[RMDB]
RNA sequence: GGGAACGACUCGAGUAGAGUCGAAAAAGCGCGCAUACUACGGUAUGCGCGCAAUCAGAAAUCGGGAAUGAUGUUCUCCCCUGGGCUUCCAAAACCGCUGUUUCGCUGAUGACGUCUGCUUUUUUAAUCACCACCGUUUGGUUCGCCAAACGGUGAACGAAUUAUGGUUGUUCGCAACCAUAAUUCGAAAAGAAACAACAACAACAAC
Reactivity to 2A3 in 0.01 (KOAc 150mM, MgCl2 10mM, bicine 150mM(pH8.5), 24C), signal-to-noise 1, nucleotides 027 to 156: a000g140c020g010c000g020c000a000u020a000c010u020a000c110g100g000u000a000u000g060c000g010c000g000c000a000a000u010c000a010g050a010a120a060u110c060g020g000g040a070a090u050g060a020u070g070u090u010c020u010c050c000c030c030u040g000g090g000c020u080u000c020c010a010a000a030a140c030c040g020c060u050g010u060u100u080c060g010c010u040g030a040u040g040a050c040g020u000c000u020g040c040u120u100u010u000u030u150a070a100u120c070a020c120c000a000c000c000g000u000u000u010g030g000u050u020c130g000c030c000a000a000a000c000g000g000u010g000a000a000
Chemical mapping of a 207-nucleotide RNA with 2A3. The reactions ran in a buffer of 150 mM KOAc, 10 mM MgCl2 and 150 mM bicine (pH 8.5), at 24 C. 2A3 adducts were read by reverse transcription with SuperScript II with manganese. For 2A3, 793 sequencing reads were counted.